[RMDB]
RNA sequence: GGGAACGACUCGAGUAGAGUCGAAAAUUUUCGAACGGGCGAUGGCCUCGGCAAACGUGUCGAAAACCUCUCUGGACUCGACGCAAUCGUUCAAGAGACGACGCUCGUCGAUGCGAUACAGGGUCUCCCGAGCACUAGGGUUCGCCCUAGUGCUCGGAAAAGAAACAACAACAACAAC
Reactivity to 2A3 in 0.01 (KOAc 150mM, MgCl2 10mM, bicine 150mM(pH8.5), 24C), signal-to-noise 2, nucleotides 027 to 126: u000u000u000u040c010g000a080a000c030g000g030g000c040g070a090u070g130g010c020c000u010c010g050g000c030a060a090a080c060g000u000g070u010c000g020a080a070a190a230c000c000u150c010u060c190u100g040g010a090c030u000c020g000a000c000g010c090a050a150u180c060g000u020u020c030a030a030g000a030g020a040c110g010a000c000g000c050u000c000g000u000c020g000a000u030g020c050g040a030u030a260c070a000g030g010g010u020c020u000c030